[RMDB]
RNA sequence: GGGAACGACUCGAGUAGAGUCGAAAAGGGCGAAAGCUUCGGCGUCUGGACCAUGGGGGCCGAUGAAGAAGUGAUGCCUUGGAUUGAUAUGGCCAAUAUCGCUUGUGGCUUUCACGCGUCCGAUCCACCCGUAAUCAUUAUUCGUAAUGAUUACGGGAAAAGAAACAACAACAACAAC
Reactivity to 2A3 in 0.01 (KOAc 150mM, MgCl2 10mM, bicine 150mM(pH8.5), 24C), signal-to-noise 9, nucleotides 027 to 126: g010g010g000c030g040a100a030a020g010c000u020u010c010g020g010c030g300u010c050u110g110g100a240c050c090a220u210g050g000g000g050g010c000c020g020a020u070g050a020a100g080a080a010g030u040g040a030u060g000c010c000u020u020g060g020a110u080u250g020a030u040a030u150g120g030c060c020a030a030u050a020u050c020g000c030u060u160g070u090g060g000c000u050u070u030c030a030c030g030c010g020u000c010c000g000a040u030c010c000a030
Reactivity to DMS in 0.01 (KOAc 150mM, MgCl2 10mM, bicine 150mM(pH8.5), 24C), signal-to-noise 9, nucleotides 027 to 126: g010g010g020c010g000a070a100a220g000c020u000u000c020g010g010c020g010u000c040u010g020g000a110c130c110a090u010g010g000g000g000g020c010c020g000a050u000g000a070a070g000a110a100g020u000g010a080u010g000c030c030u000u000g010g010a120u010u000g010a060u010a030u000g010g000c110c140a070a080u000a030u000c020g010c050u000u000g020u000g000g010c020u000u000u000c030a070c090g010c080g020u000c010c000g000a120u010c020c020a240